[RMDB]
RNA sequence: GGGAACGACUCGAGUAGAGUCGAAAAUCGCGUUGGCUGCCUAAUUCAAGGUAUUAGCGUGCCUUCAUGCUAAGGGUUUGAUAUCUGCUAAAACCCGGUGCAUUCAUCAAUGCAGGUUAAGCCAAAGAAACGGCUCACGAAUUCGUUCGUGAGCCAAGUUUAGCUCAAAGUUCGCUUUGAGCUAAACAAAAGAAACAACAACAACAAC
Reactivity to DMS in 0.01 (KOAc 150mM, MgCl2 10mM, bicine 150mM(pH8.5), 24C), signal-to-noise 2, nucleotides 027 to 156: u000c000g000c080g000u000u010g000g010c080u010g000c000c060u000a040a180u020u000c040a080a180g000g030u000a100u000u000a100g010c160g000u010g030c030c030u000u000c050a040u020g010c050u000a300a220g020g000g040u000u000u000g010a180u000a070u000c080u010g000c090u000a140a040a020a060c000c000c000g010g010u010g010c010a080u000u000c050a070u050c060a050a120u010g000c060a030g000g010u000u000a040a070g000c010c010a030a100a150g000a040a070a110c040g020g010c000u000c010a010c010g010a040a100u000u000c260g010u000u000c000g030u000g000a010g030c000c000a010a020
Reactivity to 2A3 in 0.01 (KOAc 150mM, MgCl2 10mM, bicine 150mM(pH8.5), 24C), signal-to-noise 3, nucleotides 027 to 156: u100c020g000c040g090u030u010g030g000c020u030g050c010c000u110a130a100u150u120c100a060a010g020g000u040a050u040u140a030g040c060g000u010g000c000c010u050u070c050a020u050g000c010u020a030a080g000g000g020u010u010u000g040a050u050a130u200c090u150g060c080u130a050a000a010a010c000c000c000g000g030u020g000c000a030u070u170c030a110u080c060a120a110u140g090c050a020g050g000u040u210a060a020g010c010c020a000a060a030g060a020a080a010c090g000g000c000u000c000a000c000g010a010a030u080u080c170g050u090u000c000g000u050g030a000g000c000c000a000a000